[RMDB]
RNA sequence: GGGAACGACUCGAGUAGAGUCGAAAAAAGGGCUAUCUGAAGCCGGGCAGCCGGGAUGAUGCGUCGGAGAUCCACGAGUUCCCGGUCCGGGUCACCGAUAUCGACUUGUUCGACCACAUGAACAACGGGGUAACGUCAUGUUCGCAUGACGUUACCCAAAAGAAACAACAACAACAAC
Reactivity to 2A3 in 0.01 (KOAc 150mM, MgCl2 10mM, bicine 150mM(pH8.5), 24C), signal-to-noise 1, nucleotides 027 to 126: a000a010g010g000g020c040u060a070u090c040u100g020a020a000g090c000c000g000g000g030c000a000g030c000c000g050g030g000a050u030g060a000u110g070c010g010u050c160g050g000a200g030a210u050c020c000a030c010g030a040g020u070u010c000c000c000g000g010u140c000c000g000g030g100u030c040a060c050c020g020a010u050a020u030c070g040a040c000u000u000g000u000u000c020g040a100c000c000a010c000a060u040g010a020a040c000a010a110c020g000